[RMDB]
An RNA of 177 nucleotides, treated with DMS and 2A3 and read out base by base. It was measured as part of the RMDB library OK2TRN. The DMS profile rests on 1,280 reads. The reactions ran in a buffer of 150 mM KOAc, 10 mM MgCl2 and 150 mM bicine (pH 8.5), at 24 C.
RNA sequence: GGGAACGACUCGAGUAGAGUCGAAAAAUUGGGUCAUGAGAUUCCCAAUCAAUUGGGGUUCCAGGUCAGUUCAUUCUCCUGUGCUUGAUUACUUCAAUUGCCUCGGUCAUGGAUGAGUGGCCUUAAGCACCUGACCUCUGUUCGCAGAGGUCAGGUGAAAAGAAACAACAACAACAAC
Reactivity to DMS in 0.01 (KOAc 150mM, MgCl2 10mM, bicine 150mM(pH8.5), 24C), signal-to-noise 1, nucleotides 027 to 126: a090u000u000g000g000g000u000c100a140u010g000a170g010a190u000u000c010c010c010a060a050u000c050a040a070u010u000g000g000g000g000u010u010c040c010a030g000g020u000c020a030g000u000u010c100a140u020u010c090u000c090c010u000g020u000g000c030u000u000g010a060u020u010a030c070u000u000c040a030a040u000u000g000c060c010u000c150g000g010u000c040a050u000g010g000a150u000g000a120g020u000g020g000c010c000u000u020a070a130g000
Reactivity to 2A3 in 0.01 (KOAc 150mM, MgCl2 10mM, bicine 150mM(pH8.5), 24C), signal-to-noise 1, nucleotides 027 to 126: a000u060u040g040g010g060u050c060a080u180g100a070g020a280u060u010c000c000c000a000a020u100c010a000a080u030u020g000g030g000g000u060u000c030c020a010g040g010u010c010a010g020u000u200c030a060u190u070c050u050c010c010u070g030u140g060c000u060u040g020a170u150u070a060c020u000u050c010a020a030u060u070g000c000c000u110c060g000g000u020c070a060u050g020g110a170u120g040a090g070u010g000g040c020c080u060u070a080a010g050